The data come from the RNA Mapping Database (RMDB), library TTRDEL. Chemical mapping of a 177-nucleotide RNA with DMS and 2A3. The DMS profile rests on 6,308 reads.
[RMDB]
RNA sequence: GGGAACGACUCGAGUAGAGUCGAAAAGAUAUGGAUCAGAUAGCUAGGCAGAUCGGAAACGAUGUGCCUUGGACCUAUUCUGAUCCUAAGUCAAAGCGACCGAUUCUGUUCGCAGAAUCGGUCGCAACCUAAUUAGUAUGUUCGCAUACUAAUUAGGAAAAGAAACAACAACAACAAC
Reactivity to DMS in 0.01 (KOAc 150mM, MgCl2 10mM, bicine 150mM(pH8.5), 24C), signal-to-noise 3, nucleotides 027 to 126: g010a050u000a300u000g010g000a020u000c010a010g000a020u000a010g010c040u000a020g020g010c010a030g000a010u010c000g010g000a080a070a150c000g020a010u000g000u000g010c000c010u010u000g010g010a120c290c010u000a020u010u000c000u000g000a010u000c000c000u000a010a070g000u000c030a090a120a180g000c000g000a010c000c000g000a010u000u000c000u000g000u000u000c200g000c010a030g000a010a000u000c010g000g000u000c000g010c000a010a020
Reactivity to 2A3 in 0.01 (KOAc 150mM, MgCl2 10mM, bicine 150mM(pH8.5), 24C), signal-to-noise 3, nucleotides 027 to 126: g030a000u070a020u110g010g000a000u000c000a000g010a010u010a010g040c060u020a010g020g000c000a010g010a270u010c000g010g010a080a050a010c000g010a000u020g030u010g300c000c000u010u030g020g060a020c000c020u020a040u300u170c000u000g000a000u000c000c000u000a020a000g000u000c020a130a020a100g020c000g020a000c010c000g000a010u000u000c020u030g090u090u170c300g030c150a020g000a000a000u010c020g030g010u000c000g010c000a000a000
Record summary:
DMS (dimethyl sulfate) methylates the pairing face of unpaired adenines and cytosines.